[RMDB]
RNA sequence: GGGAACGACUCGAGUAGAGUCGAAAAUUGUGAGGGUAGGGGAAAUGAUGGUAGCAAAUAGGCCCAGAAUUUCAGGGUCUUAUUCCUUGCUUAUGUAAUGAACUAGGGUGCUAUUCAGGUCAACAAACGAUCCAAUACGGUUCGCCGUAUUGGAUCGAAAAGAAACAACAACAACAAC
Reactivity to DMS in 0.01 (KOAc 150mM, MgCl2 10mM, bicine 150mM(pH8.5), 24C), signal-to-noise 2, nucleotides 027 to 126: u000u000g030u000g000a180g010g040g020u000a080g000g010g000g000a060a140a050u000g020a110u000g000g000u000a060g000c030a040a040a090u000a020g020g020c000c000c020a110g000a070a170u010u000u000c140a090g010g010g010u000c010u000u000a020u000u000c080c040u000u000g000c030u000u010a080u010g010u020a060a070u010g000a010a090c130u000a040g010g020g000u000g020c020u000a040u000u000c030a050g000g010u000c100a090a110c210a030a050a140
Reactivity to 2A3 in 0.01 (KOAc 150mM, MgCl2 10mM, bicine 150mM(pH8.5), 24C), signal-to-noise 1, nucleotides 027 to 126: u170u090g070u050g000a090g050g000g020u210a060g030g010g000g010a000a130a000u120g070a020u070g020g000u020a010g000c030a000a060a140u050a060g000g000c010c000c000a050g140a120a210u170u250u140c050a050g000g020g000u010c000u000u000a050u030u040c010c000u030u030g040c000u050u020a090u140g110u030a060a140u150g040a020a010c010u040a040g000g080g000u040g020c010u030a050u070u100c000a040g090g000u060c010a020a020c020a010a100a040